[RMDB]
RNA sequence: GGGAACGACUCGAGUAGAGUCGAAAAUGUGGUUCCUUCGGGAACCACACACUACCGAGAAUGAACCUCGGUAUAUAAAUCAAACCCUUGGAAACAAGGGAACACUCCCUAGCUUCGGCUAGGGAAAGCCUUCUUCAUAGUUCGCUAUGAAGAAGGCAAAAGAAACAACAACAACAAC
Reactivity to DMS in 0.01 (KOAc 150mM, MgCl2 10mM, bicine 150mM(pH8.5), 24C), signal-to-noise 1, nucleotides 027 to 126: u000g010u000g000g020u000u000c000c000u000u020c300g000g020g000a010a000c000c040a000c000a000c120a120c090u010a010c010c000g000a000g000a100a100u000g010a180a200c180c000u000c000g000g000u000a030u000a050u000a000a040a020u000c250a140a160a180c000c010c010u020u000g000g000a100a170a140c010a030a030g010g010g000a040a040c140a020c220u000c000c000c000u000a010g000c040u000u000c170g010g000c000u000a000g000g000g000a010a000a020
Reactivity to 2A3 in 0.01 (KOAc 150mM, MgCl2 10mM, bicine 150mM(pH8.5), 24C), signal-to-noise 1, nucleotides 027 to 126: u070g000u000g020g000u020u000c020c000u020u050c180g000g000g020a000a000c000c000a020c010a010c000a000c010u000a000c000c010g000a000g010a090a260u260g050a060a070c010c000u010c000g000g000u000a000u000a000u000a020a010a010u070c090a010a000a300c010c010c000u000u000g000g000a010a020a020c000a010a020g010g000g000a000a000c020a010c010u000c010c000c000u000a000g010c000u020u020c250g050g020c000u000a000g010g000g000a010a020a010